Chemical mapping of a 177-nucleotide RNA with DMS and 2A3.
Conditions: 150 mM KOAc, 10 mM MgCl2 and 150 mM bicine (pH 8.5), 24 C.
The DMS profile rests on 2,823 reads.
DMS adducts were read by reverse transcription with MarathonRT.
RNA sequence: GGGAACGACUCGAGUAGAGUCGAAAAAAUCGAAUCGACAGCUAUGAUGAUGGAGCUGAAGAGACAACAGAUGAACAACGAAUGUGUGGUCUGAGUGAGCUUGUGACAUCGUGUCUCACGUCAUCUACAUCCGAUUUACGUUCGCGUAAAUCGGAUGAAAAGAAACAACAACAACAAC
Reactivity to DMS in 0.01 (KOAc 150mM, MgCl2 10mM, bicine 150mM(pH8.5), 24C), signal-to-noise 3, nucleotides 027 to 126: a120a070u000c070g010a050a090u010c060g000a280c030a010g000c000u010a030u010g010a040u010g020a030u000g000g010a000g020c010u010g020a080a110g010a020g020a050c030a060a050c060a160g000a010u000g000a280a040c070a030a040c120g010a080a030u000g000u010g020u000g020g010u000c020u000g000a150g020u000g000a160g010c120u000u000g010u000g000a130c090a040u000c060g000u000g000u000c000u010c020a070c050g010u010c040a010u000c030u000a170
Reactivity to 2A3 in 0.01 (KOAc 150mM, MgCl2 10mM, bicine 150mM(pH8.5), 24C), signal-to-noise 3, nucleotides 027 to 126: a000a010u190c070g030a040a040u060c030g060a030c030a020g040c010u060a020u110g030a020u000g000a010u030g060g040a010g000c010u040g050a090a000g020a020g010a010c010a090a010c000a100g020a050u020g020a030a010c020a010a010c060g110a170a110u130g070u060g010u070g090g070u030c060u090g050a050g080u070g050a030g040c080u050u050g030u020g050a060c030a010u020c040g010u000g010u000c010u010c000a030c010g040u000c000a020u000c010u040a030